[RMDB]
RNA sequence: GGGAACGACUCGAGUAGAGUCGAAAAGUAAGAUGAUUCGUCAUCUUACGAACCCGAUGAAGCGGCACAUACCGAGCUUCAUACAUGUAAGAGUGCAAAUAAUGGCGCGUGGUUUCGACCACGCGAAUCUUACGAGUCGUUUCGACGACUCGUAAGAAAAAGAAACAACAACAACAAC
Reactivity to 2A3 in 0.01 (KOAc 150mM, MgCl2 10mM, bicine 150mM(pH8.5), 24C), signal-to-noise 2, nucleotides 027 to 126: g000u000a000a000g000a010u000g020a000u000u150c140g060u000c080a000u000c000u000u010a000c000g020a030a020c020c010c000g020a040u040g000a000a000g010c010g020g160c090a040c010a160u190a080c080c110g020a020g020c020u000u000c000a000u020a020c100a040u130g070u130a060a090g110a090g110u070g000c020a060a020a110u220a150a090u180g200g000c000g010c010g000u010g000g000u050u070u080c170g030a010c010c000a000c000g020c000g000a000a010
Reactivity to DMS in 0.01 (KOAc 150mM, MgCl2 10mM, bicine 150mM(pH8.5), 24C), signal-to-noise 2, nucleotides 027 to 126: g000u000a000a020g020a020u010g000a010u000u030c180g020u000c000a000u000c000u000u000a000c010g020a060a120c000c000c010g000a030u000g000a020a000g040c000g060g080c080a080c080a080u030a080c040c160g010a170g010c000u000u000c000a010u030a060c150a050u010g030u000a070a070g010a150g010u030g000c140a100a070a060u000a050a070u010g010g040c040g000c000g010u000g010g020u000u000u010c160g010a030c000c000a010c000g000c000g000a000a030